Source: RMDB library OK2TST, as collected in RNAgym. The record gives the reactivity of an RNA of 177 nucleotides to DMS and 2A3. The reactions ran in a buffer of 150 mM KOAc, 10 mM MgCl2 and 150 mM bicine (pH 8.5), at 24 C. The 2A3 profile rests on 1,118 reads. 2A3 adducts were read by reverse transcription with SuperScript II with manganese.
[RMDB]
RNA sequence: GGGAACGACUCGAGUAGAGUCGAAAAUCGUCUUCGAUGAUGGGCGACACAUACACCGAAGCGAACGAGGUAUGGCGCCUCCCGCUCGCAUCGAACGGGGAGAUCCUCACGAGGCGGUGGACCCCCGCACCCCUCUAGCGUUCGCGCUAGAGGGGUGAAAAGAAACAACAACAACAAC
Reactivity to DMS in 0.01 (KOAc 150mM, MgCl2 10mM, bicine 150mM(pH8.5), 24C), signal-to-noise 1, nucleotides 027 to 126: u020c060g000u030c020u000u000c060g000a070u020g010a100u010g020g000g000c030g000a090c000a090c030a060u000a070c000a110c080c020g050a070a160g010c130g010a080a110c060g010a170g010g030u010a040u000g010g020c050g000c030c020u030c000c040c000g040c040u000c090g030c170a170u000c050g050a010a060c070g000g000g060g000a160g000a130u010c030c060u030c060a130c050g000a090g000g020c010g030g000u000g010g010a150c070c000c010c000c030g010
Reactivity to 2A3 in 0.01 (KOAc 150mM, MgCl2 10mM, bicine 150mM(pH8.5), 24C), signal-to-noise 1, nucleotides 027 to 126: u020c010g020u000c000u180u120c210g190a270u090g010a050u120g020g020g000c000g090a010c030a000c000a160u080a010c060a120c070c040g060a100a010g170c100g060a110a100c020g020a050g000g030u030a030u080g060g020c020g050c000c000u000c010c000c020g020c010u010c000g080c040a250u100c140g030a010a050c010g000g000g000g060a070g010a160u060c000c010u010c010a050c010g070a080g050g000c050g000g000u010g060g020a030c010c010c010c010c000g060